[RMDB]
RNA sequence: GGGAACGACUCGAGUAGAGUCGAAAAAGUACCCCGUGGAUCGCCUGCUAUCCGGGGGAAGCAGUGGUUUUCGGUCUGGACAACACGCUUGUGCCUCGUGUGGGGAAGCCACUGGUGAUUGGGGUGAACUGAUGGCGAUAUUCGUAUCGCCAUCAGUAAAAGAAACAACAACAACAAC
Reactivity to DMS in 0.01 (KOAc 150mM, MgCl2 10mM, bicine 150mM(pH8.5), 24C), signal-to-noise 2, nucleotides 027 to 126: a060g020u000a200c020c020c000c050g020u020g000g010a130u030c060g000c020c000u000g000c010u040a120u030c080c000g020g000g000g010g000a070a060g000c000a030g000u010g010g030u010u000u010u000c000g010g020u010c110u040g000g000a120c110a120a090c120a080c080g010c100u020u030g010u000g000c020c010u000c020g000u010g010u000g000g000g000g000a000a020g000c070c010a010c000u000g000g010u000g010a040u000u000g010g000g050g020u030g000a160
Reactivity to 2A3 in 0.01 (KOAc 150mM, MgCl2 10mM, bicine 150mM(pH8.5), 24C), signal-to-noise 2, nucleotides 027 to 126: a000g110u160a090c020c010c000c000g060u090g080g000a020u000c030g000c020c050u110g030c030u060a110u070c020c000g020g000g000g030g030a000a020g050c030a000g020u060g050g050u010u000u010u100c040g020g080u020c050u060g080g020a030c030a120a020c020a040c050g050c030u070u070g030u100g090c000c020u040c070g010u020g010u050g080g100g020g010a010a000g000c000c000a000c010u000g000g030u040g010a090u020u080g000g000g000g010u010g020a020